[RMDB]
RNA sequence: GGGAACGACUCGAGUAGAGUCGAAAAGAAGGACAUAACGCGAAGAAGCAGAGAGAAGACUGUAGUGACGCGAGUCACUAGACGUCAACGACGGCAAGAGAGAGCCGAAGGAGACGAUCCUUAGGAGCAGUAUUACGUCGUUCGCGACGUAAUACUGAAAAGAAACAACAACAACAAC
Reactivity to 2A3 in 0.01 (KOAc 150mM, MgCl2 10mM, bicine 150mM(pH8.5), 24C), signal-to-noise 6, nucleotides 027 to 126: g080a010a030g050g030a010c050a060u210a100a080c100g020c040g050a070a080g040a060a020g070c020a010g030a000g010a000g020a160a010g040a010c020u030g030u090a010g010u000g010a010c000g010c050g050a030g000u000c000a000c020u010a020g030a020c020g010u010c010a020a000c010g030a000c010g000g030c060a160a020g090a010g020a010g010a000g150c010c000g020a010a010g010g010a010g000a010c030g050a130u040c010c000u080u050a040g010g050a050g070
Reactivity to DMS in 0.01 (KOAc 150mM, MgCl2 10mM, bicine 150mM(pH8.5), 24C), signal-to-noise 5, nucleotides 027 to 126: g020a080a060g000g020a030c070a100u020a050a090c080g000c040g020a070a060g010a140a100g000c020a020g000a090g000a110g010a080a070g000a070c060u020g000u010a020g010u010g000a020c000g030c270g000a160g000u000c000a020c000u000a020g010a060c120g000u000c030a030a190c030g000a250c040g000g000c030a040a130g000a120g000a090g000a120g000c010c010g000a040a160g000g000a290g000a030c070g000a030u000c000c010u010u010a130g000g000a130g010

Overview: Conditions: 150 mM KOAc, 10 mM MgCl2 and 150 mM bicine (pH 8.5), 24 C. This 177-nucleotide RNA was probed chemically with 2A3 and DMS. DMS adducts were read by reverse transcription with MarathonRT. DMS (dimethyl sulfate) methylates the pairing face of unpaired adenines and cytosines. Reactivities are given for positions 27 through 126.